[RMDB]
RNA sequence: GGGAACGACUCGAGUAGAGUCGAAAAAUCAGGUGCAGUUGGUCAUCAAGGAAACACAAACCUAGGCAAAGAGCCUGCUGGUAUCACACAUCAACUGUGGCAGUCUUAUGUUGGGAAGAGGCCUGGCUUCCAAAGCUGCUGUGCAUGACCUUGGCCCAGUAAGAGUGUAAUUCGUUACACUCUUACUAAAAGAAACAACAACAACAAC
Reactivity to DMS in 0.01 (KOAc 150mM, MgCl2 10mM, bicine 150mM(pH8.5), 24C), signal-to-noise 5, nucleotides 027 to 156: a110u010c040a090g030g020u000g030c030a070g010u000u000g040g030u000c030a130u000c080a130a130g010g000a100a090a080c050a120c040a070a090a090c030c010u010a040g020g010c020a100a110a100g000a210g020c020c010u010g020c040u000g010g000u010a090u000c070a080c020a060c050a060u010c060a050a050c050u000g020u010g000g020c040a060g010u010c050u000u010a090u010g010u000u000g020g000g010a060a070g000a110g040g010c010c010u000g020g010c020u000u000c030c040a070a080a110g000c010u000g010c020u010g010u000g010c020a090u010g000a060c020c010u000u000g020g000c000c010c020
Reactivity to 2A3 in 0.01 (KOAc 150mM, MgCl2 10mM, bicine 150mM(pH8.5), 24C), signal-to-noise 8, nucleotides 027 to 156: a000u050c030a020g020g020u050g060c020a030g030u050u060g040g030u050c030a060u040c060a120a070g100g000a090a110a010c070a010c040a110a090a020c010c030u060a040g020g000c030a160a120a110g090a080g030c010c000u040g030c080u050g020g040u070a100u160c050a030c010a010c010a120u080c030a020a130c060u050g020u060g030g000c000a010g040u060c030u060u150a130u170g120u120u130g050g010g010a030a040g020a030g040g010c000c020u010g030g000c000u020u010c020c010a020a030a060g030c020u020g000c000u020g030u060g040c090a070u080g040a040c000c020u040u090g050g000c010c010c000